[RMDB]
RNA sequence: GGGAACGACUCGAGUAGAGUCGAAAAGCUGUGGGUCAGAGUGAGGUCAACUCGGGAGGGCCUCUAGGCAGGGCGCCCACAUGCAGGGAGCUGCCAGGUGCCUGGUCAGCAGCAGUCAGUGGGUGGGAACGGAAGAUCCUUUCGAGGAUCUUCCGUUAAAAGAAACAACAACAACAAC
Reactivity to DMS in 0.01 (KOAc 150mM, MgCl2 10mM, bicine 150mM(pH8.5), 24C), signal-to-noise 1, nucleotides 027 to 126: g000c060u010g020u000g020g010g050u010c030a150g020a120g030u000g000a030g020g000u000c120a050a110c040u010c220g030g100g000a170g060g000g020c000c010u000c050u000a050g000g020c100a150g030g010g020c020g010c020c000c010a030c020a020u000g040c030a140g020g000g020a120g020c030u000g000c000c050a060g040g020u010g020c090c010u000g010g000u000c060a060g000c000a080g040c070a100g000u000c190a040g010u010g000g000g000u020g010g010g000